About this RNA:
Structure probing data (2A3) for a 177-nucleotide construct. The data come from the RNA Mapping Database (RMDB), library OK1LIB. For 2A3, 419 sequencing reads were counted.
[RMDB]
RNA sequence: GGGAACGACUCGAGUAGAGUCGAAAAAAUUUUUCGACAUAAUCUAUGAAACUAAAUGUACUUCAGGAUUUGAUUUAUCGAAAAUGAUGGUCUCACGUGCAGAUUCGUUUCAUGAAGAGCUUGAACCCAGUGGUCGACGUUUCGACGUCGACCACUGAAAAGAAACAACAACAACAAC
Reactivity to 2A3 in 0.01 (KOAc 150mM, MgCl2 10mM, bicine 150mM(pH8.5), 24C), signal-to-noise 2, nucleotides 027 to 126: a000a000u210u130u000u000u000c000g000a000c000a050u300a260a040u000c060u250a160u060g020a020a000a000c030u030a000a000a090u040g000u020a030c040u090u070c090a010g090g100a140u000u030u050g040a050u000u060u120a140u070c220g160a130a120a000a000u070g000a000u010g000g000u070c060u000c030a000c000g000u030g050c010a050g060a270u030u030c020g020u000u010u000c000a000u000g090a040a110g000a010g080c150u060u050g000a000a000c000c000